[RMDB]
RNA sequence: GGGAACGACUCGAGUAGAGUCGAAAAUGGUGUUAAGUGGAAUAAGUGGAUACAUAUACAUAUAUGUACAGGGGGCUACAUAUAUGUAUAUGCCCCCUCGCGUCAGUAUAAGUAGGUAUAAGGUGGACCAUGAUGAGUGGUUCGCCACUCAUCAUGGAAAAGAAACAACAACAACAAC
Reactivity to DMS in 0.01 (KOAc 150mM, MgCl2 10mM, bicine 150mM(pH8.5), 24C), signal-to-noise 2, nucleotides 027 to 126: u000g030g000u000g000u000u010a050a100g030u010g010g000a080a090u020a060a100g030u000g020g010a140u020a060c020a020u000a000u000a020c040a030u000a000u000a020u020g010u000a010c130a130g000g000g000g000g010c170u000a010c020a060u070a010u000a010u000g000u000a000u040a000u000g000c050c010c020c050c000u000c000g020c060g030u000c050a030g000u030a040u010a070a060g020u000a060g000g020u010a100u000a040a070g020g010u000g000g000a080
Reactivity to 2A3 in 0.01 (KOAc 150mM, MgCl2 10mM, bicine 150mM(pH8.5), 24C), signal-to-noise 2, nucleotides 027 to 126: u060g050g010u040g010u130u040a100a020g060u020g090g040a080a140u120a270a000g020u040g060g050a040u050a070c020a000u010a000u020a000c000a000u040a000u020a000u000g000u040a030c150a200g000g010g000g120g000c020u000a000c000a000u050a000u010a000u010g000u000a000u000a000u020g020c000c000c000c000c000u000c000g000c000g100u030c000a000g020u040a020u020a160a080g100u050a010g070g000u090a150u020a110a020g060g040u050g050g010a010
The record gives the reactivity of an RNA of 177 nucleotides to DMS and 2A3. Source: RMDB library OK1LIB, as collected in RNAgym. DMS adducts were read by reverse transcription with MarathonRT.